[RMDB]
RNA sequence: GGGAACGACUCGAGUAGAGUCGAAAAUGGGCAAUUUGAUUGUGGGCAAGGAAGACACACUGUUUGGGAGGCCCUCCGAUCCUGGAAAGGACAUCUCUCGUGACCUGGUGGCAGCUGUGCUUGUCGAUCAUCGACUCUCUUUCGAGAGAGUCGAUGAAAAAGAAACAACAACAACAAC
Reactivity to DMS in 0.01 (KOAc 150mM, MgCl2 10mM, bicine 150mM(pH8.5), 24C), signal-to-noise 1, nucleotides 027 to 126: u010g010g000g020c040a060a080u000u000u020g030a120u000u000g000u010g000g000g020c060a060a170g000g020a050a130g060a220c100a160c060a040c140u000g010u010u000u020g040g000g030a080g000g000c050c000c020u000c010c050g000a140u030c020c060u000g010g000a040a100a060g030g000a050c080a100u010c030u000c010u000c090g000u000g000a050c090c030u000g000g030u000g000g000c040a060g030c120u000g030u000g000c030u000u000g030u000c050g010a190